[RMDB]
RNA sequence: GGGAACGACUCGAGUAGAGUCGAAAAGAUAUGGACAGUCAUGCACCAACAGCUAACAUCGGAAACGAUGUUAGACAUGGUGACAUGCUGUCCUAAGUCAAAACCGUUGUCGUUCGCGACAACGGAAGAUGUGACGUAGGUUCGCCUACGUCACAUCAAAAGAAACAACAACAACAAC
Reactivity to DMS in 0.01 (KOAc 150mM, MgCl2 10mM, bicine 150mM(pH8.5), 24C), signal-to-noise 3, nucleotides 027 to 126: g000a040u010a300u000g000g000a060c010a000g000u000c020a000u000g000c000a030c000c010a040a060c300a300g010c000u000a000a010c000a010u010c000g010g000a150a120a170c010g050a000u000g000u000u000a000g030a020c110a190u000g010g010u010g020a120c000a000u000g020c010u000g010u000c010c000u000a000a050g020u000c030a070a090a120a140c020c000g010u000u000g010u000c000g030u000u000c220g020c010g000a020c000a020a000c020g000g000a020a030
Reactivity to 2A3 in 0.01 (KOAc 150mM, MgCl2 10mM, bicine 150mM(pH8.5), 24C), signal-to-noise 4, nucleotides 027 to 126: g040a030u080a030u150g010g000a010c010a000g030u300c030a020u010g030c000a010c000c000a070a140c080a170g060c010u000a000a000c000a010u000c000g030g010a060a060a030c000g000a000u010g010u010u000a000g010a010c000a070u080g000g020u000g030a250c000a000u020g000c000u000g000u000c000c000u000a010a020g030u000c040a040a030a080a100c020c000g010u000u000g000u000c030g010u050u110c300g010c000g180a000c010a000a000c010g000g010a000a020
The data come from the RNA Mapping Database (RMDB), library TTRDES. An RNA of 177 nucleotides, treated with DMS and 2A3 and read out base by base. For DMS the reverse transcriptase was MarathonRT. The 2A3 profile rests on 9,832 reads. For DMS, 2,737 sequencing reads were counted. 2A3 adducts were read by reverse transcription with SuperScript II with manganese.